[RMDB]
Source: RMDB library VIROID, as collected in RNAgym. The record gives the reactivity of an RNA of 177 nucleotides to 2A3 and DMS. Reactivities are given for positions 27 through 126. The RNA was probed in 150 mM KOAc, 10 mM MgCl2 and 150 mM bicine (pH 8.5) at 24 C. The DMS profile rests on 5,446 reads.
RNA sequence: GGGAACGACUCGAGUAGAGUCGAAAACUCUGAGCGGAGAGGAGUAAGUCCAUAGCGAUAGGAGGGGAUGCUAGGAGUAAGAGGAGACCGAAGCGAGGAGGAAAGCAAAGAAAGCAACGGGGCUAGCGAUAUGAACAAUGUUCGCAUUGUUCAUAUCAAAAGAAACAACAACAACAAC
Reactivity to 2A3 in 0.01 (KOAc 150mM, MgCl2 10mM, bicine 150mM(pH8.5), 24C), signal-to-noise 5, nucleotides 027 to 126: c020u000c040u050g040a040g040c050g040g050a050g000a030g100g000a030g050u060a090a020g040u000c010c020a110u090a020g040c070g070a050u060a090g040g030a040g020g000g000g010a020u080g000c030u030a020g000g050a040g040u050a070a020g040a030g050g020a040g000a020c020c040g020a030a010g020c030g020a020g030g000a020g010g040a050a010a010g030c040a060a050a080g060a030a100a010g020c020a040a030c030g020g000g000g010c010u020a010g040c020
Reactivity to DMS in 0.01 (KOAc 150mM, MgCl2 10mM, bicine 150mM(pH8.5), 24C), signal-to-noise 5, nucleotides 027 to 126: c030u000c010u000g010a140g040c060g010g010a110g010a100g010g010a070g010u000a080a150g010u000c040c030a090u000a100g010c060g000a080u000a070g010g020a060g020g000g000g010a060u010g000c060u010a060g010g000a070g010u010a060a090g000a080g000g010a140g010a070c060c050g010a070a090g000c100g010a080g010g000a060g000g000a040a040a090g010c090a040a060a090g000a060a080a080g010c070a050a060c070g010g000g000g020c110u000a060g010c160